[RMDB]
RNA sequence: GGGAACGACUCGAGUAGAGUCGAAAAGAAGCACGGCUUGUGUGUGAUCCUUUUGGAUUGCACUGUAUAUCCUACGCUGUGCGAAAGUAGGUCCAUUGUGGCGAGAGCCACUUACAGUACAGCUUAUUAUGACGCAUCGCUGUACGAACGAUGCCGAGAGGUAAUCCGAGUUCGCUCGGAUUACCUCAAAAGAAACAACAACAACAAC
Reactivity to 2A3 in 0.01 (KOAc 150mM, MgCl2 10mM, bicine 150mM(pH8.5), 24C), signal-to-noise 2, nucleotides 027 to 156: g060a050a000g000c030a000c010g000g020c010u200u170g080u000g000u010g000u010g110a000u050c000c020u090u240u070u300g030g000a020u010u030g010c030a000c010u000g020u050a090u030a040u040c030c020u030a010c070g020c020u000g050u020g000c000g020a030a000a000g030u040a010g000g010u010c050c040a130u020u160g010u000g020g020c060g010a030g000a000g020c020c000a000c000u110u070a060c030a010g000u000a000c000a000g030c020u040u110a070u100u100a200u250g110a090c090g000c170a110u090c030g000c030u010g000u010a000c000g000a000a030c020g050a070u170g010c000c030g000a030
Reactivity to DMS in 0.01 (KOAc 150mM, MgCl2 10mM, bicine 150mM(pH8.5), 24C), signal-to-noise 1, nucleotides 027 to 156: g000a070a150g000c010a030c020g010g040c010u020u000g030u000g000u000g050u010g010a050u000c000c010u000u000u010u010g070g000a050u030u000g040c000a010c010u000g010u010a090u010a170u000c060c080u000a150c150g300c000u000g000u000g000c010g000a060a000a140g040u000a020g010g050u010c090c020a170u000u000g010u000g050g060c000g000a300g010a300g020c000c010a020c000u010u020a070c070a130g010u000a070c000a110g050c060u010u020a050u010u000a120u000g030a170c250g000c030a080u020c110g010c030u000g030u000a050c050g010a000a000c060g000a070u000g000c030c010g010a300
The record gives the reactivity of an RNA of 207 nucleotides to 2A3 and DMS. Source: RMDB library OK3TST, as collected in RNAgym. The reactions ran in a buffer of 150 mM KOAc, 10 mM MgCl2 and 150 mM bicine (pH 8.5), at 24 C. For 2A3 the reverse transcriptase was SuperScript II with manganese.